[RMDB]
RNA sequence: GGGAACGACUCGAGUAGAGUCGAAAAGAUAUGGAGCUACGUAGCCGUUUGACGCUCGUCGGAAACGACGAGCCGAGGAACUACUACUUAGCUCCUAAGUCAAAAGUGGAAGGUUCGCCUUCCACAACUAGAUCUAUUAGUUCGCUAAUAGAUCUAGAAAAGAAACAACAACAACAAC
Reactivity to DMS in 0.01 (KOAc 150mM, MgCl2 10mM, bicine 150mM(pH8.5), 24C), signal-to-noise 9, nucleotides 027 to 126: g000a040u000a300u000g000g000a010g010c000u000a000c070g010u000a010g010c030c100g010u000u000u000g000a300c300g000c000u000c000g020u000c000g010g000a110a100a160c010g010a010c000g000a010g010c000c010g000a210g000g000a010a010c010u000a070c010u000a010c000u000u000a010g000c000u000c000c000u000a010a060g000u000c030a080a070a100a120g020u000g000g000a020a010g010g010u000u000c270g010c000c000u000u000c000c000a000c000a030a080
Reactivity to 2A3 in 0.01 (KOAc 150mM, MgCl2 10mM, bicine 150mM(pH8.5), 24C), signal-to-noise 7, nucleotides 027 to 126: g030a000u060a040u180g000g000a000g000c000u010a000c030g000u010a000g040c080c050g040u020u050u110g020a010c010g000c000u000c000g000u000c000g020g030a070a070a060c010g000a000c000g000a000g000c000c000g000a010g050g060a030a030c030u030a010c000u000a000c000u060u010a000g000c000u000c000c000u010a020a000g040u020c020a050a040a030a100g000u000g000g010a010a010g040g030u090u230c300g160c030c000u000u000c000c000a000c000a000a000

Source: RMDB library TTRDEL, as collected in RNAgym.
Structure probing data (DMS and 2A3) for a 177-nucleotide construct.
For DMS the reverse transcriptase was MarathonRT.
High 2A3 reactivity points to a flexible backbone, as in loops and unpaired stretches.